[RMDB]
RNA sequence: GGGAACGACUCGAGUAGAGUCGAAAAUGUCUUAUCAAAUGCAGGGCUGCCAACUUGUUUUGACUGUUACACUGCAAAAUCCUAACACGCCUAAGUAUUCCUUCGGUGUUGUUAAGCCUGGUGAGACCCGUCACAAAACAUUCGUGUUUUGUGACGGAAAAGAAACAACAACAACAAC
Reactivity to DMS in 0.01 (KOAc 150mM, MgCl2 10mM, bicine 150mM(pH8.5), 24C), signal-to-noise 2, nucleotides 027 to 126: u000g030u000c010u000u000a030u000c010a040a150a160u000g000c020a010g020g010g010c040u000g010c000c010a010a010c100u010u010g000u000u000u000u010g030a040c010u010g010u000u030a130c080a190c030u000g000c020a000a050a100a080u000c020c020u000a010a020c020a020c030g000c010c010u000a010a010g000u010a200u020u020c110c000u000u000c130g020g010u000g010u010u020g010u000u000a010a060g000c200c080u010g010g020u000g000a050g000a050c000
Reactivity to 2A3 in 0.01 (KOAc 150mM, MgCl2 10mM, bicine 150mM(pH8.5), 24C), signal-to-noise 2, nucleotides 027 to 126: u060g010u000c000u010u010a010u030c010a020a020a110u040g000c000a000g030g010g000c000u010g010c010c000a000a000c070u220u130g140u090u250u020u020g030a010c010u000g020u050u180a100c160a040c060u000g000c000a020a050a070a070u000c000c020u010a000a010c010a010c010g000c000c000u010a020a010g020u060a210u280u240c020c040u000u030c050g000g020u010g030u150u120g010u020u000a010a000g000c010c030u030g000g000u000g010a000g000a020c070

Chemical mapping of a 177-nucleotide RNA with DMS and 2A3. For DMS, 1,600 sequencing reads were counted.